[RMDB]
RNA sequence: GGGAACGACUCGAGUAGAGUCGAAAAGAAAUGUACUAAACCAACUAAACGAGCUUGAACAAUUGAUAACGCUACUGGUUUAUCUCUCCAACGGAUUAAGUUAGCUAAUGGAGUACGUUCAUGUGCCGCAUCCUUACUUGUUCGCAAGUAAGGAUGCAAAAGAAACAACAACAACAAC
Reactivity to 2A3 in 0.01 (KOAc 150mM, MgCl2 10mM, bicine 150mM(pH8.5), 24C), signal-to-noise 3, nucleotides 027 to 126: g060a000a060a010u170g000u120a010c020u070a030a110a100c050c020a030a090c040u120a130a090a030c040g060a010g050c000u040u070g030a040a000c000a040a150u100u110g010a020u030a040a030c050g060c070u130a120c110u150g040g060u030u020u060a020u010c010u000c000u000c000c010a000a050c050g000g000a020u100u110a110a100g280u080u160a050g060c010u040a060a070u040g020g000a000g000u010a020c050g010u020u050c000a030u050g090u080g070c020c010
Reactivity to DMS in 0.01 (KOAc 150mM, MgCl2 10mM, bicine 150mM(pH8.5), 24C), signal-to-noise 2, nucleotides 027 to 126: g000a080a050a090u000g060u000a050c110u000a120a090a300c090c030a060a030c160u040a050a070a120c070g020a270g010c060u000u010g000a090a100c050a130a100u020u000g020a010u000a030a010c120g000c130u020a030c170u000g000g020u000u000u020a030u000c020u000c040u000c030c040a070a030c220g030g000a060u000u000a090a070g010u000u000a060g020c030u000a080a240u000g000g010a040g020u000a100c090g020u010u030c000a020u020g010u000g020c080c100